[RMDB]
RNA sequence: GGGAACGACUCGAGUAGAGUCGAAAACGCAGCACCUGGUCGGGGCGGGGCCCCACGGCCACCAGGCCGUGGUUGGCGAUCAGGGCGGCGGCGCGGCCCUCAAGCGCGCGCACCGCGUUGCGGCCGACAUAGGGAGGAUGUUCGCAUCCUCCCUAUGAAAAGAAACAACAACAACAAC
Reactivity to 2A3 in 0.01 (KOAc 150mM, MgCl2 10mM, bicine 150mM(pH8.5), 24C), signal-to-noise 1, nucleotides 027 to 126: c020g000c010a020g000c020a060c120c010u010g000g020u010c010g000g000g060g120c050g000g030g000g000c000c000c010c010a000c020g000g030c000c040a040c060c060a090g010g080c030c010g000u020g000g000u080u180g010g000c010g010a020u040c010a000g020g030g040c020g030g000c030g080g020c030g010c000g030g030c020c010c000u030c050a060a030g020c080g000c010g000c010g010c230a020c010c020g010c030g040u040u040g010c040g020g070c010c000g050a040
Reactivity to DMS in 0.01 (KOAc 150mM, MgCl2 10mM, bicine 150mM(pH8.5), 24C), signal-to-noise 4, nucleotides 027 to 126: c030g000c020a040g010c050a300c020c010u000g000g010u000c020g010g010g010g030c150g010g010g010g010c030c020c010c000a020c000g000g000c000c010a100c280c270a110g000g030c000c000g030u000g000g000u010u010g010g020c000g000a020u000c020a030g010g000g010c010g010g010c040g010g000c040g010c010g010g000c020c030c110u010c220a110a120g000c030g020c010g020c050g000c070a120c040c010g010c010g030u000u000g010c110g000g010c010c020g000a190
This 177-nucleotide RNA was probed chemically with 2A3 and DMS. The RNA was probed in 150 mM KOAc, 10 mM MgCl2 and 150 mM bicine (pH 8.5) at 24 C. DMS adducts were read by reverse transcription with MarathonRT. High 2A3 reactivity points to a flexible backbone, as in loops and unpaired stretches.